Source information: The record gives the reactivity of an RNA of 177 nucleotides to DMS. The RNA was probed in 150 mM KOAc, 10 mM MgCl2 and 150 mM bicine (pH 8.5) at 24 C.

RNA sequence: GGGAACGACUCGAGUAGAGUCGAAAAAUCUCCACCGGGUGUUGCCAACUUCAUAAACACGCCAGCUGUUGUAACAAAAGAAGCAUUGUUCCCAGGUUCAGUAGAAAGGGAUGGAGAUAAAGUGACACGUUCAUCCCACAUUCGUGUGGGAUGAACGAAAAGAAACAACAACAACAAC
Reactivity to DMS in 0.01 (KOAc 150mM, MgCl2 10mM, bicine 150mM(pH8.5), 24C), signal-to-noise 1, nucleotides 027 to 126: a000u000c000u000c000c040a040c040c030g000g000g000u000g000u020u000g070c040c040a160a170c180u060u060c020a210u020a000a030a030c070a050c040g000c000c020a100g060c030u040g010u000u000g000u010a040a150c150a040a120a070a110g040a150a070g070c000a040u000u000g010u000u000c000c000c000a040g030g020u000u000c020a000g020u010a030g020a030a190a050g000g000g000a230u000g020g000a010g000a000u000a090a010a160g030u000g000a120c100a200